[RMDB]
RNA sequence: GGGAACGACUCGAGUAGAGUCGAAAACGACAUCCUUCGGGAUGUCGAAAAAAACCUUUGUGGACCCAUGGACAUGAUGCGAAGGUCCCAUUGGGACUCAAGCAUCAACAGCCAUGAGGUCCACUCUGGUAAAAAGGUAAUUAUUCGUAAUUACCAAUGUUCAACCAAUGUUCGCAUUGGUUGAACAAAAAGAAACAACAACAACAAC
Reactivity to 2A3 in 0.01 (KOAc 150mM, MgCl2 10mM, bicine 150mM(pH8.5), 24C), signal-to-noise 1, nucleotides 027 to 156: c010g000a010c000a000u020c000c010u090u060c170g140g030g000a000u000g010u020c030g000a020a070a100a000a010a000a010c010c000u020u020u000g000u000g020g000a000c000c000c000a000u000g010g030a140c050a130u010g000a050u120g080c000g100a290a030g100g000u000c000c010c000a250u250u300g000g000g000a010c030u020c140a100a000g000c020a000u000c000a050a010c010a060g060c000c000a000u010g030a070g020g010u000c000c000a000c000u000c020u000g000g030u100a240a120a000a000a000g000g010u000a000a000u000u000a040u020u120c150g100u060a000a000u020u000a070c040c000a010a110